An RNA of 177 nucleotides, treated with DMS and 2A3 and read out base by base. Source: RMDB library TTRDEL, as collected in RNAgym. DMS adducts were read by reverse transcription with MarathonRT.
RNA sequence: GGGAACGACUCGAGUAGAGUCGAAAAGAUAUGGAGGCGAAGCUCAUCGAUCUAUAAAAGUCUCGGAAACGAGUCGCUAUAGGGAGAGCUAAGCCUCCUAAGUCAAACUAGUACUUCGGUACUAGAACAACUACUUUAGCUUCGGCUAAAGUAGUUGAAAAGAAACAACAACAACAAC
Reactivity to DMS in 0.01 (KOAc 150mM, MgCl2 10mM, bicine 150mM(pH8.5), 24C), signal-to-noise 3, nucleotides 027 to 126: g000a060u000a240u010g010g000a000g020g000c000g000a300a070g010c020u000c000a300u000c140g010a040u010c000u000a000u010a030a170a170a170g000u000c000u000c010g000g010a100a060a160c000g000a000g000u000c030g020c250u000a020u010a020g000g020g000a010g000a010g010c000u000a000a300g000c000c000u000c000c000u000a000a100g010u000c060a060a150a290c010u000a010g020u000a010c000u010u020c240g030g010u000a000c000u000a010g000a100a190
Reactivity to 2A3 in 0.01 (KOAc 150mM, MgCl2 10mM, bicine 150mM(pH8.5), 24C), signal-to-noise 2, nucleotides 027 to 126: g030a000u060a000u110g000g000a000g010g000c040g000a000a010g020c000u000c010a200u300c060g050a050u020c020u000a020u030a020a300a060a150g090u060c000u010c030g040g000a060a070a000c010g000a020g030u030c060g030c130u020a000u020a010g040g000g000a050g000a020g000c000u000a020a000g000c000c010u020c000c000u000a000a000g000u020c010a010a010a020c000u010a000g000u000a000c000u040u060c300g140g010u000a000c000u020a000g080a020a020